[RMDB]
Conditions: 150 mM KOAc, 10 mM MgCl2 and 150 mM bicine (pH 8.5), 24 C. Structure probing data (DMS and 2A3) for a 177-nucleotide construct. For 2A3, 506 sequencing reads were counted. The DMS profile rests on 861 reads. Source: RMDB library OK1LIB, as collected in RNAgym.
RNA sequence: GGGAACGACUCGAGUAGAGUCGAAAAAUUGUGGGUCGUCGCGUACACGCCGCCUCUGGCCGCGUUUACCACGUUAAGUUUAAUCCGCCGAAAGUGGAAGGCAAAGAUGACGUCACCGGCGAAGAUCCGUCACGCAUGAGUUCGCUCAUGCGUGACGAAAAGAAACAACAACAACAAC
Reactivity to DMS in 0.01 (KOAc 150mM, MgCl2 10mM, bicine 150mM(pH8.5), 24C), signal-to-noise 1, nucleotides 027 to 126: a170u050u060g000u040g070g000g000u000c120g000u000c000g000c000g010u000a000c020a000c000g050c070c150g000c070c000u100c240u080g010g050c040c270g040c030g000u000u000u000a130c090c070a100c010g020u000u010a070a080g000u000u000u120a000a130u000c080c220g010c000c000g050a170a210a070g080u120g000g010a070a040g000g040c120a210a260a040g000a000u000g050a000c090g000u000c010a050c000c210g020g000c000g000a020a060g000a000u000c000
Reactivity to 2A3 in 0.01 (KOAc 150mM, MgCl2 10mM, bicine 150mM(pH8.5), 24C), signal-to-noise 1, nucleotides 027 to 126: a000u020u030g010u040g000g000g030u010c010g000u000c000g000c030g150u110a000c000a000c060g080c000c010g020c000c060u170c030u030g060g000c010c000g000c000g060u110u110u080a010c000c000a010c010g000u100u140a040a200g040u000u070u150a100a020u000c000c000g000c000c000g300a060a060a050g100u230g000g010a210a140g040g040c000a020a020a020g280a180u000g000a010c100g000u090c000a000c210c020g000g010c060g090a000a000g010a040u070c000